Chemical mapping of a 177-nucleotide RNA with 2A3 and DMS. It was measured as part of the RMDB library OK1LIB. For 2A3 the reverse transcriptase was SuperScript II with manganese.
[RMDB]
RNA sequence: GGGAACGACUCGAGUAGAGUCGAAAAUGAGUUCGUCGCCGGCGACCGUGUCGUGCUCGAAGCGAACGAUGACUACUGGGGUGCAAAGCCGACAGCCUCGAAGAUCACCUAUCAGAUCGUCCCGGAGAUAUUAGUAGGCUUUCGAGCCUACUAAUAUAAAAGAAACAACAACAACAAC
Reactivity to 2A3 in 0.01 (KOAc 150mM, MgCl2 10mM, bicine 150mM(pH8.5), 24C), signal-to-noise 9, nucleotides 027 to 126: u150g020a030g050u040u050c020g030u050c030g030c050c000g030g010c030g040a090c060c090g090u120g030u130c040g030u100g050c050u040c100g060a080a020g040c010g020a020a010c030g030a060u110g040a030c030u050a020c040u100g030g000g030g000u060g040c050a070a050a050g020c010c010g050a040c020a020g020c000c010u020c040g030a070a020g030a060u050c010a030c040c000u050a050u070c020a030g030a110u040c010g020u020c010c010c020g020g010a100g020
Reactivity to DMS in 0.01 (KOAc 150mM, MgCl2 10mM, bicine 150mM(pH8.5), 24C), signal-to-noise 7, nucleotides 027 to 126: u010g000a100g020u000u000c040g010u010c080g000c070c050g010g010c050g000a070c120c120g010u040g020u020c030g000u010g010c040u020c070g010a290a100g010c040g010a060a060c040g010a060u010g000a080c040u010a080c070u010g020g000g000g000u000g010c120a110a100a130g000c020c020g010a060c090a100g010c050c000u000c050g010a110a090g000a100u000c030a090c040c030u000a070u030c070a110g000a080u010c040g000u000c010c010c000g020g010a110g000